Structure probing data (2A3 and DMS) for a 177-nucleotide construct. For DMS the reverse transcriptase was MarathonRT. 2A3 adducts were read by reverse transcription with SuperScript II with manganese. The RNA was probed in 150 mM KOAc, 10 mM MgCl2 and 150 mM bicine (pH 8.5) at 24 C.

RNA sequence: GGGAACGACUCGAGUAGAGUCGAAAAGAUAUGGAGGACGCAAGCCGUUUGACGCUUCUCGGAAACGAGAAGCCGAGGCUUGAACUACGUCACUCCUAAGUCAAAGUGGCAGCUUCGGCUGCCACAAGUUAUAGGUAUGGUUCGCCAUACCUAUAACAAAAGAAACAACAACAACAAC
Reactivity to 2A3 in 0.01 (KOAc 150mM, MgCl2 10mM, bicine 150mM(pH8.5), 24C), signal-to-noise 5, nucleotides 027 to 126: g030a000u080a040u200g010g000a010g010g010a000c010g010c040a000a000g000c010c010g050u130u220u270g040a020c030g000c000u000u010c000u000c000g010g020a080a080a050c000g000a010g000a000a000g000c010c010g010a010g010g000c000u000u010g000a020a000c040u120a030c020g000u000c020a300c210u010c010c000u010a110a010g070u050c060a060a050a100g000u000g010g000c000a000g000c000u080u130c300g180g000c000u010g000c000c000a000c000a000a000
Reactivity to DMS in 0.01 (KOAc 150mM, MgCl2 10mM, bicine 150mM(pH8.5), 24C), signal-to-noise 9, nucleotides 027 to 126: g000a050u000a300u010g000g020a010g020g000a020c010g020c010a020a010g010c000c010g000u000u010u010g020a150c300g000c000u000u000c000u000c000g000g000a100a100a170c000g000a020g000a020a010g010c000c010g000a050g010g010c000u000u000g000a050a070c110u010a290c020g000u000c010a120c010u000c000c000u010a020a090g010u000c050a080a140a120g000u000g000g010c000a010g000c000u000u010c200g020g010c000u000g020c000c000a000c000a000a050

The 2A3 profile rests on 18,331 reads.